[RMDB]
Structure probing data (DMS and 2A3) for a 177-nucleotide construct. Reactivities are given for positions 27 through 126. For DMS the reverse transcriptase was MarathonRT. High DMS reactivity at an A or C suggests that its Watson-Crick edge is free. For 2A3, 5,036 sequencing reads were counted. The data come from the RNA Mapping Database (RMDB), library OK2TST.
RNA sequence: GGGAACGACUCGAGUAGAGUCGAAAAUACCAGAGCAUUACGGAACGCUUACCUAUGUAGAUGAUGCAGGAGUUUGGCACGAAGAGAAAGUAAUCUCUGAGGUUGGCGAUUAUGGUCGCGUAUACGAUGGUAAUCACUAUUUCGAUAGUGAUUACCAAAAAGAAACAACAACAACAAC
Reactivity to DMS in 0.01 (KOAc 150mM, MgCl2 10mM, bicine 150mM(pH8.5), 24C), signal-to-noise 9, nucleotides 027 to 126: u000a180c040c020a130g010a080g010c100a040u010u000a060c050g010g000a090a100c100g010c030u000u000a070c050c040u000a080u000g010u000a050g000a120u010g010a110u010g020c030a050g010g010a090g010u000u000u000g020g020c050a090c090g010a130a060g010a060g000a050a100a150g010u000a060a080u000c010u000c010u000g000a120g010g000u000u010g010g010c030g000a060u000u000a080u010g010g020u000c170g020c040g010u010a050u010a070c130g000a140
Reactivity to 2A3 in 0.01 (KOAc 150mM, MgCl2 10mM, bicine 150mM(pH8.5), 24C), signal-to-noise 5, nucleotides 027 to 126: u120a010c010c010a000g010a000g040c100a040u040u110a040c040g030g050a090a010c030g030c040u050u080a040c010c010u110a110u150g040u050a040g030a180u190g020a060u060g040c020a030g000g080a080g060u110u130u110g070g000c040a030c090g040a060a020g030a000g030a050a090a010g070u090a060a150u020c010u000c010u020g030a030g060g030u060u080g090g000c020g010a030u130u060a120u220g120g000u030c020g010c010g030u030a060u030a070c070g040a050